An RNA of 177 nucleotides, treated with DMS and 2A3 and read out base by base. DMS adducts were read by reverse transcription with MarathonRT.
[RMDB]
RNA sequence: GGGAACGACUCGAGUAGAGUCGAAAAGGAGUCGCGCCUCUAGCCGUUCAAACGACCGCUGAUGAAGAUGAUUUCGCCGAGCGGAUCGUCGUCGUGUGGGGCGGGAACGGGCAAACCAUUGCGCCUGCUUUCUGAGACACUUCGGUGUCUCAGAAAGAAAAGAAACAACAACAACAAC
Reactivity to DMS in 0.01 (KOAc 150mM, MgCl2 10mM, bicine 150mM(pH8.5), 24C), signal-to-noise 1, nucleotides 027 to 126: g010g010a050g010u000c160g000c270g010c040c050u000c060u000a120g010c080c010g000u010u010c030a010a130a300c010g010a180c020c020g000c050u000g000a090u000g000a020a060g010a110u000g000a080u010u010u010c000g040c020c170g000a120g020c010g010g000a030u000c000g000u000c070g020u000c020g020u000g030u010g010g000g000g020c020g050g000g030a040a000c010g010g000g000c050a050a040a110c070c030a130u000u010g020c070g000c060c070u000g050
Reactivity to 2A3 in 0.01 (KOAc 150mM, MgCl2 10mM, bicine 150mM(pH8.5), 24C), signal-to-noise 1, nucleotides 027 to 126: g100g010a020g000u040c020g000c020g000c050c000u050c010u020a000g060c000c000g040u050u010c050a240a230a120c040g000a000c010c030g000c020u000g030a060u060g030a090a050g050a050u190g010a030u180u130u160c040g000c110c160g110a020g000c010g010g000a050u020c000g020u010c010g010u010c030g000u010g000u030g090g010g000g000c000g010g010g000a020a000c030g000g050g020c060a090a010a020c040c040a110u080u160g000c080g030c020c000u020g000
For 2A3, 1,086 sequencing reads were counted.
For 2A3 the reverse transcriptase was SuperScript II with manganese.